[RMDB]
RNA sequence: GGGAACGACUCGAGUAGAGUCGAAAAAGGUGUGGAGCGACCUUAAACAGUUCUGGUGGUGCUAUGAAUGGAGUGCUCUACUGAGAUUAUAAAAUAGAAGGUAAGCUAUUAUCUCUUACAACAGGGCGAAGCACUCGGGGGUUCGCCCCCGAGUGAACCUACUCCUAUGGUUCGCCAUAGGAGUAGGAAAAGAAACAACAACAACAAC
Reactivity to 2A3 in 0.01 (KOAc 150mM, MgCl2 10mM, bicine 150mM(pH8.5), 24C), signal-to-noise 1, nucleotides 027 to 156: a000g000g000u030g010u050g000g010a000g010c000g000a000c000c000u110u130a160a060a000c000a030g020u030u040c010u050g060g010u030g000g000u000g000c020u040a000u090g090a110a070u050g060g010a080g010u030g010c010u000c060u110a100c020u050g010a000g010a060u020u110a050u180a120a110a060a000u070a040g030a100a000g100g040u130a000a030g030c000u010a030u030u050a040u100c020u000c000u030u110a050c000a060a050c050a110g010g050g000c050g100a090a010g010c000a000c000u010c000g010g000g000g010g000u010u020c120g060c000c010c020c000c000g000a000g000u000g000a010a000